Chemical mapping of a 177-nucleotide RNA with DMS and 2A3. DMS adducts were read by reverse transcription with MarathonRT.

[RMDB]
RNA sequence: GGGAACGACUCGAGUAGAGUCGAAAAGGCCGUCUUACCGAGGUCGUCGCCGUCGAAGCCGACGACGGUGACCUGAUCAUCACUCACGCAAUGCCGAAGGAGUGGAAGCGAUGACGAAGAAGCCACGCCUCAAGCACAAAUUCGUUUGUGCUUGAGGAAAAGAAACAACAACAACAAC
Reactivity to DMS in 0.01 (KOAc 150mM, MgCl2 10mM, bicine 150mM(pH8.5), 24C), signal-to-noise 3, nucleotides 027 to 126: g000g030c020c030g000u000c020u010u010a120c060c040g000a050g010g010u000c010g000u000c010g010c020c010g020u000c000g000a150a140g030c220c010g050a030c000g000a020c000g000g010u000g010a020c010c020u000g000a080u000c090a090u000c000a040c000u010c040a120c030g000c040a140a120u000g000c070c060g000a070a110g010g000a110g020u010g000g020a060a060g010c060g000a050u000g010a030c030g000a110a040g000a300a170g000c020c030a060c240g010
Reactivity to 2A3 in 0.01 (KOAc 150mM, MgCl2 10mM, bicine 150mM(pH8.5), 24C), signal-to-noise 3, nucleotides 027 to 126: g050g000c040c020g050u000c030u040u110a070c020c060g060a030g000g000u010c020g010u010c010g010c030c000g000u010c000g060a270a070g230c210c020g070a020c010g000a000c000g010g010u000g000a010c000c010u040g010a060u030c020a030u010c010a010c010u020c000a060c020g020c050a130a300u270g070c110c020g010a090a040g180g020a030g020u060g000g040a050a020g060c060g070a040u090g000a010c030g020a050a050g040a050a020g070c020c020a020c040g010